The data come from the RNA Mapping Database (RMDB), library M2PK50. An RNA of 177 nucleotides, treated with DMS and 2A3 and read out base by base. For DMS, 7,228 sequencing reads were counted.

[RMDB]
RNA sequence: GGGAACGACUCGAGUAGAGUCGAAAACGGACGGGCUUCGGCCCGUCCGAAAGUACGAAGAUGUCAAAUCUCGCAGACAUGAAACGUACAAAAGCGAGAAAAAAACGAGAUAGUUCGCUAUCUCGAAGAUAUGUAUCAUGUUCGCAUGAUACAUAUCAAAAGAAACAACAACAACAAC
Reactivity to DMS in 0.01 (KOAc 150mM, MgCl2 10mM, bicine 150mM(pH8.5), 24C), signal-to-noise 5, nucleotides 027 to 126: c030g020g020a040c010g030g010g030c010u000u010c200g050g030c010c010c000g010u010c000c000g010a010a010a060g000u000a010c020g020a160a110g020a040u000g010u000c010a110a130a080u010c010u000c020g000c010a090g000a030c010a020u000g010a060a070a090c040g010u000a020c020a060a030a110a110g000c010g000a030g020a000a010a060a080a060a060a170c010g000a010g000a020u000a010g010u000u020c220g020c010u000a010u000c000u000c000g000a040a040
Reactivity to 2A3 in 0.01 (KOAc 150mM, MgCl2 10mM, bicine 150mM(pH8.5), 24C), signal-to-noise 4, nucleotides 027 to 126: c010g020g000a010c020g010g000g040c020u080u090c200g150g000c060c050c000g030u010c000c000g000a010a000a000g000u000a000c020g040a070a040g110a140u030g010u010c010a030a050a230u020c030u020c030g000c020a010g010a020c000a000u040g030a090a090a040c030g020u040a020c030a020a070a010a010g020c010g010a020g000a080a020a010a000a010a000a010c000g000a000g000a010u000a010g020u040u050c180g000c080u000a000u000c000u000c000g000a020a000